RNA sequence: GGGAACGACUCGAGUAGAGUCGAAAAAAAGAUAUGGAAUGCCGCUGUGUCAGACCGUCAAUGACGAAGCUCGGAAACGAGCUUUAAGACAGACGACCUGACAGUGAACGGCAUUCCUAAGUCAAAAGCUAUAGAUAGACUUCGGUCUAUCUAUAGCAAAAGAAACAACAACAACAAC
Reactivity to 2A3 in 0.01 (KOAc 150mM, MgCl2 10mM, bicine 150mM(pH8.5), 24C), signal-to-noise 3, nucleotides 027 to 126: a000a000a050g060a030u080a060u180g000g020a020a010u010g010c020c010g020c090u100g040u020g000u300c000a010g010a060c060c000g000u000c030a150a300u150g010a020c070g010a000a010g020c010u020c000g020g040a070a130a050c010g010a000g000c000u000u000u000a030a000g020a010c020a020g040a020c010g000a030c020c010u000g000a010c020a050g100u070g180a200a030c000g000g000c000a000u000u010c000c000u010a000a010g020u020c020a010a000a220a110
Reactivity to DMS in 0.01 (KOAc 150mM, MgCl2 10mM, bicine 150mM(pH8.5), 24C), signal-to-noise 3, nucleotides 027 to 126: a060a120a030g010a050u020a300u000g000g000a030a000u000g000c000c000g020c040u000g000u000g000u000c010a000g000a030c020c000g050u000c030a120a120u020g020a150c300g000a010a010g000c010u000c000g020g010a130a110a180c000g000a000g010c000u000u000u000a080a120g030a160c210a120g000a000c000g000a040c000c000u000g000a010c000a050g020u000g020a040a080c010g000g000c000a000u000u000c010c010u000a020a060g020u000c030a080a130a150a120

The record gives the reactivity of an RNA of 177 nucleotides to 2A3 and DMS. It was measured as part of the RMDB library TTRDES. For DMS, 3,225 sequencing reads were counted. The RNA was probed in 150 mM KOAc, 10 mM MgCl2 and 150 mM bicine (pH 8.5) at 24 C.